[RMDB]
RNA sequence: GGGAACGACUCGAGUAGAGUCGAAAAGAUAUGGAAUUCGAUACUACCCACCCUCCGGGUUCGGAAACGAACCGGAGGAGGUAUCGAGAUUCCUAAGUCAAAACAGUGCUCGUUCGCGAGCACUGAAGAAAAUCCACUUGUUCGCAAGUGGAUUUUCAAAAGAAACAACAACAACAAC
Reactivity to DMS in 0.01 (KOAc 150mM, MgCl2 10mM, bicine 150mM(pH8.5), 24C), signal-to-noise 1, nucleotides 027 to 126: g000a040u000a230u010g000g010a020a040u000u000c010g000a020u000a020c010u000a150c150c200c150a300c140c000c000u000c000c000g000g040g000u000u000c000g020g000a070a040a160c010g010a010a050c000c000g020g000a020g000g010a000g020g000u000a000u000c000g040a050g040a060u000u000c000c000u010a000a100g020u010c050a130a070a140a300c000a000g010u020g000c000u000c000g010u000u010c170g020c020g000a010g000c000a000c010u000g000a040a140